[RMDB]
RNA sequence: GGGAACGACUCGAGUAGAGUCGAAAACAGCUUUUUCUAGGGGAAUCUACAUUUUCAAUGUAAAAUUCAGGAACCCUAUUCUGAAUUUGUGAAUCAUUCGUUUCCGGUAUCGAUGACGUGGUGUUAAAGCAGUACCUAUGUUCGCAUAGGUACUGCUAAAAGAAACAACAACAACAAC
Reactivity to 2A3 in 0.01 (KOAc 150mM, MgCl2 10mM, bicine 150mM(pH8.5), 24C), signal-to-noise 2, nucleotides 027 to 126: c020a030g060c020u070u150u030u090u040c050u080a030g020g020g040g030a050a090u040c050u080a120c040a150u050u040u020u040c100a110a060u050g030u110a060a100a050a000u010u000c000a000g090g020a170a230c000c010c040u070a130u110u030c030u040g020a040a040u020u020u060g050u080g100a080a120u050c030a030u170u000c030g020u060u060u030c000c010g060g080u100a060u100c070g000a080u160g000a020c030g050u080g000g000u030g000u060u130a050a090
Reactivity to DMS in 0.01 (KOAc 150mM, MgCl2 10mM, bicine 150mM(pH8.5), 24C), signal-to-noise 2, nucleotides 027 to 126: c140a110g000c080u000u000u000u000u020c030u010a050g010g000g050g010a130a050u020c060u010a060c060a090u000u010u050u020c150a030a010u040g000u020a040a030a010a040u000u000c030a020g020g000a030a150c110c050c040u000a200u010u020c000u000g010a040a020u000u000u000g000u000g020a050a060u050c080a080u000u000c040g000u010u000u010c000c010g000g000u010a030u000c120g000a040u010g000a040c100g010u010g000g020u010g020u010u010a030a110
The record gives the reactivity of an RNA of 177 nucleotides to 2A3 and DMS. For 2A3, 906 sequencing reads were counted. 2A3 adducts were read by reverse transcription with SuperScript II with manganese. The reactions ran in a buffer of 150 mM KOAc, 10 mM MgCl2 and 150 mM bicine (pH 8.5), at 24 C. For DMS, 2,880 sequencing reads were counted. The data come from the RNA Mapping Database (RMDB), library OK1LIB.